[RMDB]
RNA sequence: GGGAACGACUCGAGUAGAGUCGAAAAUUUAGACAUUUUGGACAUCCAUGGAUCGAUUAUUUAACUGGAUUGGACAAAUUGGAAUCCCAGGUAAAUAAAGACUGUCAAGUCGACAUUCAGUACGCUAAGGUCAGAUAGUGUUCGCACUAUCUGACCUAAAAGAAACAACAACAACAAC
Reactivity to 2A3 in 0.01 (KOAc 150mM, MgCl2 10mM, bicine 150mM(pH8.5), 24C), signal-to-noise 1, nucleotides 027 to 126: u060u060u080a020g000a020c020a030u000u000u040u070g000g000a010c000a010u000c000c000a020u170g060g030a050u130c170g070a110u180u300a060u170u260u060a060a020c060u040g000g010a000u090u140g040g020a000c000a020a130a040u010u010g000g050a040a010u010c010c030c010a000g090g150u080a060a110a110u080a010a100a060g040a020c030u050g020u120c110a000a070g130u100c000g000a010c000a020u080u080c020a000g090u000a060c030g000c130u000a060
Reactivity to DMS in 0.01 (KOAc 150mM, MgCl2 10mM, bicine 150mM(pH8.5), 24C), signal-to-noise 2, nucleotides 027 to 126: u000u000u020a230g010a230c010a000u000u000u000u000g000g050a060c010a030u010c000c000a020u000g000g020a140u000c230g000a130u000u000a110u020u000u000a090a170c120u010g020g000a030u010u010g020g000a080c000a000a000a020u000u000g010g020a190a110u020c000c000c000a120g000g020u000a020a020a060u000a030a130a130g000a010c030u010g010u000c120a060a070g000u000c210g000a100c080a010u010u000c050a020g000u000a080c150g020c080u030a080